An RNA of 177 nucleotides, treated with DMS and 2A3 and read out base by base. For 2A3 the reverse transcriptase was SuperScript II with manganese. For 2A3, 4,686 sequencing reads were counted. High 2A3 reactivity points to a flexible backbone, as in loops and unpaired stretches. The reactions ran in a buffer of 150 mM KOAc, 10 mM MgCl2 and 150 mM bicine (pH 8.5), at 24 C. The DMS profile rests on 4,621 reads.
[RMDB]
RNA sequence: GGGAACGACUCGAGUAGAGUCGAAAAUGAAGGGAAUCCACGAAACAACCAAGAAUGAAUUGAAAGAACGACGUUGACUGGGGCGACGCUAGGGUCAUAGUGGUGGACUCGCCGAAACAACCAAGAAACGUACACAUAGUUUCGACUAUGUGUACGUAAAAGAAACAACAACAACAAC
Reactivity to DMS in 0.01 (KOAc 150mM, MgCl2 10mM, bicine 150mM(pH8.5), 24C), signal-to-noise 5, nucleotides 027 to 126: u010g010a150a140g010g010g000a050a050u000c010c010a050c050g010a090a090a090c100a070a090c060c070a060a100g010a110a060u010g000a120a150u010u000g000a100a090a080g010a080a110c090g000a060c070g020u000u010g020a080c100u000g000g000g010g010c070g000a040c060g020c040u000a070g010g010g010u000c040a040u000a060g010u010g010g020u000g010g010a040c040u010c040g000c030c020g010a050a070a070c110a060a090c040c050a080a100g010a070a090
Reactivity to 2A3 in 0.01 (KOAc 150mM, MgCl2 10mM, bicine 150mM(pH8.5), 24C), signal-to-noise 4, nucleotides 027 to 126: u100g010a030a010g050g000g010a000a030u010c020c010a000c030g070a080a050a020c050a030a040c030c040a030a050g070a070a090u150g040a040a110u150u080g050a100a100a070g050a080a030c060g130a010c030g060u040u040g030a080c050u060g020g030g040g040c020g020a020c020g010c050u030a030g090g000g000u030c020a040u050a060g060u060g090g000u020g000g020a010c010u020c030g090c020c000g030a050a010a010c020a030a010c010c030a010a000g070a080a160
Source: RMDB library OK2TST, as collected in RNAgym. Values cover nucleotides 27 to 126.